This 177-nucleotide RNA was probed chemically with 2A3.
Source: RMDB library OK2TST, as collected in RNAgym.
[RMDB]
RNA sequence: GGGAACGACUCGAGUAGAGUCGAAAACUCAAAACAAUGGUGUCAAAAUUAACAUUCCACCACCACACGUAACGAACGAAGUUAUUUCGGUAACCGGAGAAAAGGAUGGAGUUCUACGUGUUGCUGACUACGGCUCGUGAUUCGUCACGAGCCGUAGAAAAGAAACAACAACAACAAC
Reactivity to 2A3 in 0.01 (KOAc 150mM, MgCl2 10mM, bicine 150mM(pH8.5), 24C), signal-to-noise 1, nucleotides 027 to 126: c030u040c000a000a020a020a050c220a070a020u090g000g000u050g050u120c060a010a050a080a210u130u160a050a000c040a120u060u040c060c010a000c030c010a010c030c020a010c000a010c000g030u070a210a170c100g000a000a000c020g000a030a000g000u030u000a090u070u050u010c050g050g030u130a080a180c040c030g100g000a030g000a030a140a010a030g180g050a030u060g010g020a040g040u000u000c030u030a000c000g010u030g000u030u020g000c030u050g000a020